[RMDB]
RNA sequence: GGGAACGACUCGAGUAGAGUCGAAAAGAUAUGGAUAUGGUCUUCGAUAAGCCUGACAUCGGAAACGAUGUAGGCUUUUGACGAAGGUCCAUAUCCUAAGUCAAACCACCGGCUUCGGCCGGUGGAACUGUAUGCAAAUGUUCGCAUUUGCAUACAGAAAAGAAACAACAACAACAAC
Reactivity to DMS in 0.01 (KOAc 150mM, MgCl2 10mM, bicine 150mM(pH8.5), 24C), signal-to-noise 4, nucleotides 027 to 126: g000a030u000a300u010g000g000a010u010a000u000g010g010u000c000u000u000c000g010a160u000a030a020g000c010c000u000g020a020c000a000u000c000g020g000a120a080a150c010g020a000u000g000u000a020g000g020c000u000u000u010u010g020a190c170g010a010a000g010g000u020c000c010a000u000a000u000c000c000u000a000a070g010u000c020a130a200a290c020c000a000c000c000g020g000c010u010u020c230g030g020c010c000g000g000u000g000g000a010a030
Reactivity to 2A3 in 0.01 (KOAc 150mM, MgCl2 10mM, bicine 150mM(pH8.5), 24C), signal-to-noise 2, nucleotides 027 to 126: g010a010u050a040u150g000g000a010u000a010u010g000g020u010c010u000u000c040g110a100u050a280a010g000c010c020u090g230a080c000a010u000c020g030g000a090a030a010c020g010a000u000g010u000a010g000g000c070u030u010u010u040g060a060c090g020a010a010g020g010u070c000c000a000u020a000u020c000c000u000a030a000g010u000c000a060a060a160c000c000a000c010c010g000g010c010u000u210c300g190g030c000c000g000g000u000g000g000a000a010